[RMDB]
RNA sequence: GGGAACGACUCGAGUAGAGUCGAAAAUAGACACGCCAGGACAAUGUCGUAGCGCUGCCCGGGAUGCGUGGUGGCCCACAGCUCUUUUUGCUCUACCAUGAUCUGCUGGCUCUCCCAGUACCUUUCUACAGGAAACCCGUCAGUGUCGCUCUCAAAGCGUCUCAGAUAAAUUCGUUUAUCUGAGACGAAAAGAAACAACAACAACAAC
Reactivity to DMS in 0.01 (KOAc 150mM, MgCl2 10mM, bicine 150mM(pH8.5), 24C), signal-to-noise 2, nucleotides 027 to 156: u000a090g020a110c000a060c020g040c020c000a120g000g010a080c040a100a090u000g040u000c020g040u020a090g010c050g030c070u000g040c020c000c010g010g000g040a120u000g010c060g110u000g000g020u010g030g020c070c000c050a050c080a090g010c070u000c000u000u000u010u000u020g020c030u000c010u000a050c040c060a110u010g010a080u010c020u000g020c040u010g000g000c020u000c080u030c040c010c020a120g020u000a050c080c040u000u000u000c020u020a070c020a080g010g000a080a090a070c050c020c000g040u000c030a120g010u000g010u010c020g030c010u000c040u010c010a070a120a130g000
Reactivity to 2A3 in 0.01 (KOAc 150mM, MgCl2 10mM, bicine 150mM(pH8.5), 24C), signal-to-noise 5, nucleotides 027 to 156: u160a010g040a010c020a010c050g030c010c020a040g050g030a070c060a120a090u110g020u080c050g040u090a030g020c010g000c080u040g010c020c020c030g020g020g020a120u150g030c030g030u070g000g040u020g030g020c000c030c010a060c030a020g000c010u020c010u060u090u040u090u100g010c010u000c010u040a030c010c020a050u070g030a110u060c030u080g020c020u010g030g000c000u010c010u020c020c000c010a000g030u070a100c000c010u050u130u140c040u070a050c040a030g020g020a040a010a080c020c010c010g040u050c050a050g010u000g000u040c010g000c030u000c000u010c000a090a110a020g070
Structure probing data (DMS and 2A3) for a 207-nucleotide construct. It was measured as part of the RMDB library OK3TST. For DMS, 4,483 sequencing reads were counted.